[RMDB]
RNA sequence: GGGAACGACUCGAGUAGAGUCGAAAAGAUAUGGAAUAUGGGACUUGCCACAGAGGUCGGAAACGACUACCCACCUGUGGAACUACAAGUUAGUAUUCCUAAGUCAAAAGUCACCUUCGGGUGACAAGACUACUCCCAAGUUCGCUUGGGAGUAGUCAAAAGAAACAACAACAACAAC
Reactivity to DMS in 0.01 (KOAc 150mM, MgCl2 10mM, bicine 150mM(pH8.5), 24C), signal-to-noise 2, nucleotides 027 to 126: g010a020u010a300u010g000g000a000a000u000a020u000g040g020g020a010c000u010u000g010c000c000a000c000a000g000a140g030g000u000c000g000g000a100a070a170c020g010a010c010u010a070c010c040c140a300c090c000u000g000u000g000g010a060a020c050u010a300c000a010a030g000u000u000a300g010u000a000u000u010c010c000u000a030a110g000u000c020a070a050a070a130g000u000c000a000c000c000u000u020c190g010g010g010u000g000a000c020a030a030
Reactivity to 2A3 in 0.01 (KOAc 150mM, MgCl2 10mM, bicine 150mM(pH8.5), 24C), signal-to-noise 2, nucleotides 027 to 126: g010a010u090a020u220g000g020a010a020u010a010u060g290g280g050a020c000u000u000g000c010c020a000c000a000g000a010g040g020u010c020g000g050a100a100a010c000g020a020c030u060a070c060c100c010a040c010c010u000g030u020g020g040a010a030c080u260a050c040a020a010g000u000u010a010g000u000a000u000u000c000c000u020a100a050g020u030c020a080a020a000a250g020u000c000a020c010c000u010u060c210g170g000g010u020g010a000c000a000a000